Annotation:
This 177-nucleotide RNA was probed chemically with 2A3 and DMS. Source: RMDB library OK1LIB, as collected in RNAgym. For DMS the reverse transcriptase was MarathonRT. For 2A3, 4,353 sequencing reads were counted. For 2A3 the reverse transcriptase was SuperScript II with manganese.
RNA sequence: GGGAACGACUCGAGUAGAGUCGAAAAGAAGACGUGACGAAAAGUCACGAAAAAGAUCUAUGAAAAUAGAUCAAAAAAGGUGGUGCUCACCUAAAAGCACAAAGGUUACCGAGAGGUAACCAAAAGACCUAAUAGCGGGAUUCGUCCCGCUAUUAGGAAAAGAAACAACAACAACAAC
Reactivity to 2A3 in 0.01 (KOAc 150mM, MgCl2 10mM, bicine 150mM(pH8.5), 24C), signal-to-noise 3, nucleotides 027 to 126: g110a070a020g140a050c010g020u000g000a000c010g090a070a120a020a150g000u000c000a000c010g060a050a040a000a000a000g010a000u000c000u000a000u020g060a000a040a000a060u000a000g000a000u020c050a000a040a070a020a000a060g010g010u060g030g010u010g000c140u160c120a050c010c010u100a030a010a000a000g000c000a000c020a010a060a020g000g000u000u000a000c000c020g010a020g030a020g100g000u000a000a000c000c000a010a000a000a000g000a020
Reactivity to DMS in 0.01 (KOAc 150mM, MgCl2 10mM, bicine 150mM(pH8.5), 24C), signal-to-noise 1, nucleotides 027 to 126: g000a150a150g020a290c000g000u000g000a000c030g000a130a090a080a210g010u000c000a000c020g010a020a090a080a120a100g000a000u000c000u040a000u000g010a110a060a090a000u000a000g000a000u000c000a000a040a090a110a030a050g010g000u010g010g000u010g000c000u060c040a040c000c000u060a000a040a020a010g000c000a000c000a050a040a080g010g020u000u000a010c000c030g010a170g000a120g000g030u000a000a000c000c000a000a040a060a070g010a100

Record summary:
Conditions: 150 mM KOAc, 10 mM MgCl2 and 150 mM bicine (pH 8.5), 24 C.